Notes:
The record gives the reactivity of an RNA of 207 nucleotides to 2A3. Conditions: 150 mM KOAc, 10 mM MgCl2 and 150 mM bicine (pH 8.5), 24 C. It was measured as part of the RMDB library RNAMAK. As a SHAPE reagent, 2A3 marks flexible, mostly unpaired nucleotides at the ribose 2'-OH. For 2A3, 1,175 sequencing reads were counted. Values cover nucleotides 27 to 156. Values are in units of 0.01, from 0 to 300, in steps of 10.

RNA sequence: GGGAACGACUCGAGUAGAGUCGAAAAGCGUACUACUUUAGUCACCCGCAAGCAACAGCCCUAUGGAGCGCCAAUCCCAAAUAGGAUUGGCCCCAUAGGGACAUGCUUGCGACAAGUCUAAAGUAUCGCAAAAGGACUUGUGUUCGCACAAGUCCAACUACUCUCCUCGGUUCGCCGAGGAGAGUAGAAAAGAAACAACAACAACAAC
Reactivity to 2A3 in 0.01 (KOAc 150mM, MgCl2 10mM, bicine 150mM(pH8.5), 24C), signal-to-noise 2, nucleotides 027 to 156: g000c010g020u030a050c060u000a000c000u060u010u020a010g010u040c020a070c040c010c000g000c000a000a000g000c000a000a050c020a110g050c000c030c000u000a000u010g000g020a130g000c180g020c070c000a000a000u000c020c000c030a160a300a190u260a080g000g000a000u000u000g000g060c000c000c000c000a000u000a000g000g000g000a000c000a000u000g000c000u000u000g000c000g000a000c010a050a180g010u020c000u010a000a030a000g020u000a020u300c000g020c000a030a070a040a050g010g000a000c000u000u050g000u000g050u100u170c210g000c190a000c000a010a000g000u000c000c000a010a000